[RMDB]
RNA sequence: GGGAACGACUCGAGUAGAGUCGAAAAGGAAUCGACAGUAGAGUGUAUCAUGUCAGUAAGCAUGCCGGGGAAUGGUGGUUUACCCCGUUAUCAAAUGAUUACCGACCAAGAAUUGGCGAAACUCGUUAGGCCCGUCCACACUUCGGUGUGGACGGAAACUGAUCAGACCUUUCGAGGUCUGAUCAGUAAAAGAAACAACAACAACAAC
Reactivity to DMS in 0.01 (KOAc 150mM, MgCl2 10mM, bicine 150mM(pH8.5), 24C), signal-to-noise 1, nucleotides 027 to 156: g000g000a050a060u000c030g000a060c020a110g000u010a100g010a120g040u000g030u010a090u010c090a150u010g000u000c010a010g010u000a080a090g010c000a110u000g020c120c040g040g020g020g000a070a100u000g010g010u030g020g010u000u000u000a250c000c010c010c020g000u000u000a060u020c300a130a100a030u000g020a120u010u000a050c010c000g010a020c020c090a020a110g030a090a090u000u000g050g010c000g010a120a050a090c040u000c060g050u000u000a050g020g030c020c000c000g000u010c000c000a000c000a010c000u000u000c250g010g030u000g050u010g010g020a000c020g010g010a010a000
Reactivity to 2A3 in 0.01 (KOAc 150mM, MgCl2 10mM, bicine 150mM(pH8.5), 24C), signal-to-noise 3, nucleotides 027 to 156: g030g030a010a070u090c040g040a040c030a020g060u110a020g050a040g060u100g020u040a080u180c090a060u110g080u050c040a020g060u090a130a000g010c020a000u060g080c030c020g010g000g000g010a030a020u060g050g000u010g010g040u030u050u070a050c000c000c000c010g010u030u060a040u050c030a040a040a070u050g020a020u090u040a040c020c040g020a040c020c040a020a010g090a080a110u140u050g010g010c040g050a070a060a030c100u040c020g060u010u040a040g030g040c020c000c000g000u020c000c000a000c000a000c000u010u070c210g050g000u000g000u000g000g000a000c000g000g000a000a000